[RMDB]
RNA sequence: GGGAACGACUCGAGUAGAGUCGAAAAGAUAUGGAGGCUUGGAUUUACGAGACGUCUAUCGGAAACGAUAGUCGUCGAUGAGUUGUCAGCCUCCUAAGUCAAACGCCAUGGCUUCGGCCAUGGCGAAGUUUGAAUAGGUGUUCGCACCUAUUCAAACAAAAGAAACAACAACAACAAC
Reactivity to DMS in 0.01 (KOAc 150mM, MgCl2 10mM, bicine 150mM(pH8.5), 24C), signal-to-noise 2, nucleotides 027 to 126: g000a020u000a090u020g010g000a020g000g000c000u020u000g020g010a080u010u010u010a020c070g010a180g010a000c000g010u000c000u000a000u000c000g000g000a010a030a050c000g000a000u010a000g010u000c000g030u010c010g010a060u010g010a150g000u000u000g000u020c030a020g010c000c000u000c000c010u020a010a050g010u000c020a110a140a280c030g010c000c010a010u010g000g020c000u000u010c240g020g010c010c000a000u000g000g000c000g000a000a020
Reactivity to 2A3 in 0.01 (KOAc 150mM, MgCl2 10mM, bicine 150mM(pH8.5), 24C), signal-to-noise 2, nucleotides 027 to 126: g010a000u020a000u060g010g000a000g020g000c040u200u260g180g040a130u300u300u300a090c100g070a040g000a140c000g020u000c000u000a000u010c000g000g000a030a010a000c000g010a000u020a000g020u000c000g000u000c010g020a020u050g100a110g040u060u070g040u020c000a000g020c000c000u020c000c000u010a000a000g000u000c010a030a050a120c030g000c000c010a000u000g010g000c010u110u070c300g130g000c010c000a000u010g020g000c000g000a020a000
Structure probing data (DMS and 2A3) for a 177-nucleotide construct.
Reactivities are given for positions 27 through 126.
For 2A3, 3,772 sequencing reads were counted.
It was measured as part of the RMDB library TTRDEL.